[RMDB]
RNA sequence: GGGAACGACUCGAGUAGAGUCGAAAAGAAAUUACGUUUCCUUUACACUACUCAAACCGGGAUCAAGAGAAGCAAAGCAUCCCUCAUAUCCACGAUGGAGGGUGUCGUGGAGUAUACUGUACCAAAAAGAGCGAACACGGCUUCGGCCGUGUUCGAACGUGUUUAAAAACUUCGGUUUUUAAACACGAAAAGAAACAACAACAACAAC
Reactivity to 2A3 in 0.01 (KOAc 150mM, MgCl2 10mM, bicine 150mM(pH8.5), 24C), signal-to-noise 5, nucleotides 027 to 156: g040a000a070a010u190u090a060c050g000u020u010u020c010c000u030u090u090a040c040a020c030u150a020c000u030c060a070a080a170c070c050g020g010g000a030u060c050a130a020g060a030g040a180a030g060c070a070a070a030g030c010a030u020c010c040c000u020c020a120u150a020u040c010c000a020c020g010a020u040g070g070a040g060g030g000u050g010u000c000g000u000g000g010a010g000u000a010u020a040c100u080g060u140a070c010c070a060a070a030a020a010g130a030g070c010g000a000a000c000a000c000g000g040c020u040u100c220g030g000c000c010g000u000g000u000u000c000g000a000a000
Reactivity to DMS in 0.01 (KOAc 150mM, MgCl2 10mM, bicine 150mM(pH8.5), 24C), signal-to-noise 2, nucleotides 027 to 156: g010a090a040a070u010u010a070c170g000u000u000u000c000c000u000u000u010a110c030a100c020u000a030c000u000c000a010a060a060c030c050g040g000g000a160u000c100a050a110g000a090g000a060a110g010c070a100a130a160g020c090a120u000c020c000c000u010c040a090u000a140u000c020c010a030c090g040a080u000g000g000a130g040g030g030u010g020u000c020g030u000g010g010a030g020u000a060u000a080c090u020g010u020a160c030c060a020a020a120a060a110g000a270g000c010g010a010a030c020a000c020g020g000c000u000u000c300g050g050c000c010g000u000g000u000u000c000g000a000a030